RNA sequence: GGGAACGACUCGAGUAGAGUCGAAAACAUACACACAUCCAUAAUGACAGCGCACAAGUGUCGCAGAUUUGAAGGGAAGCUUGCAGUUGUGACAGCAAGUACUGCUGGCAUCGGCCUCGCGAUUGCCCUUCAUGUCAAUUUUCGAAUUGACAUGAAGAAAAGAAACAACAACAACAAC
Reactivity to DMS in 0.01 (KOAc 150mM, MgCl2 10mM, bicine 150mM(pH8.5), 24C), signal-to-noise 9, nucleotides 027 to 126: c080a090u010a090c090a070c080a070c080a060u010c030c030a060u010a080a060u010g010a080c120a060g010c060g020c070a050c080a080a120g010u000g000u000c040g020c050a050g000a100u000u000u000g010a070a060g000g010g010a110a100g010c030u000u000g020c020a060g010u000u000g010u010g000a080c070a050g010c030a020a130g010u000a070c100u000g020c020u000g010g010c020a030u000c060g000g010c040c030u000c070g010c030g010a090u000u000g020c040c050
Reactivity to 2A3 in 0.01 (KOAc 150mM, MgCl2 10mM, bicine 150mM(pH8.5), 24C), signal-to-noise 7, nucleotides 027 to 126: c010a030u200a060c030a000c020a010c000a100u020c040c010a040u090a160a060u190g070a030c010a040g000c020g010c050a010c020a160a160g070u040g020u130c030g000c030a030g040a180u100u170u160g090a090a040g060g010g030a050a020g040c020u020u050g000c020a030g020u150u100g080u120g110a050c020a010g010c000a050a040g040u060a090c040u050g020c010u020g010g000c000a020u060c030g050g010c000c030u030c040g030c000g080a080u030u160g070c000c010
The record gives the reactivity of an RNA of 177 nucleotides to DMS and 2A3.
The data come from the RNA Mapping Database (RMDB), library OK2TRN.
For 2A3, 13,761 sequencing reads were counted.